[RMDB]
RNA sequence: GGGAACGACUCGAGUAGAGUCGAAAACGAGAAUUCCUUUGAUGUUUCCUAGCCAGGGAUUGUCGUCCUCGAGUUUCUUGAUCUUCUUCUUAACCUUCCGGAGAUCCCUCUCGAGUUCCUCUAACUUCUUUCUUCCGUUCACCCACUGCUCGAGAGCCGGUACUUCCAAGUUCGCUUGGAAGUACCGAAAAGAAACAACAACAACAAC
Reactivity to 2A3 in 0.01 (KOAc 150mM, MgCl2 10mM, bicine 150mM(pH8.5), 24C), signal-to-noise 2, nucleotides 027 to 156: c010g020a010g120a030a090u050u080c030c000u100u100u160g130a160u090g100u070u080u090c030c050u100a080g040c020c050a030g000g000g000a010u010u040g170u010c030g000u050c020c020u010c050g040a070g090u000u040u020c000u050u110g020a020u030c010u080u000c010u140u050c020u140u160a130a140c000c030u130u130c160c080g010g000a000g000a020u000c030c030c000u040c000u000c010g030a020g020u010u040c020c000u020c050u070a060a090c050u100u110c000u090u150u070c000u120u080c040c030g050u030u040c030a120c030c000c010a050c040u090g000c000u030c010g030a020g050a010g030c000